Conditions: 150 mM KOAc, 10 mM MgCl2 and 150 mM bicine (pH 8.5), 24 C. Structure probing data (2A3 and DMS) for a 177-nucleotide construct. 2A3 adducts were read by reverse transcription with SuperScript II with manganese. For DMS, 9,447 sequencing reads were counted.
[RMDB]
RNA sequence: GGGAACGACUCGAGUAGAGUCGAAAAGAUAUGGACAGAGCGAUAAGCGUUUACUCGGAAACGAGUAUGCGCUUUUGACGCUCGUCCUAAGUCAAAAGAUUCCCCUCACUUCGGUGAGGGGAAUCAACCAUAAUAAAAGGUUCGCCUUUUAUUAUGGAAAAGAAACAACAACAACAAC
Reactivity to 2A3 in 0.01 (KOAc 150mM, MgCl2 10mM, bicine 150mM(pH8.5), 24C), signal-to-noise 4, nucleotides 027 to 126: g010a000u060a020u070g020g000a010c200a220g010a250g010c000g030a060u020a160a040g000c000g010u010u010u010a010c000u010c000g020g000a080a060a040c010g000a000g010u000a000u010g000c020g000c020u010u010u010u020g030a020c010g000c000u000c000g000u000c000c000u010a090a020g050u010c030a010a030a030a180g020a010u010u000c000c000c010c010u000c000a020c000u050u130c300g130g010u000g000a000g000g000g010g000a000a000u000c000a000a000
Reactivity to DMS in 0.01 (KOAc 150mM, MgCl2 10mM, bicine 150mM(pH8.5), 24C), signal-to-noise 5, nucleotides 027 to 126: g000a030u000a300u010g000g000a010c010a090g030a000g020c000g030a140u000a030a010g000c000g000u000u000u000a010c000u000c000g010g000a080a100a150c000g000a010g010u000a000u000g010c000g010c000u000u010u000u000g010a190c060g010c000u000c000g000u000c000c000u000a010a080g010u000c030a080a060a130a120g000a020u000u000c000c000c010c000u000c000a010c000u000u020c200g030g010u000g010a010g000g010g000g000a000a000u000c000a040a110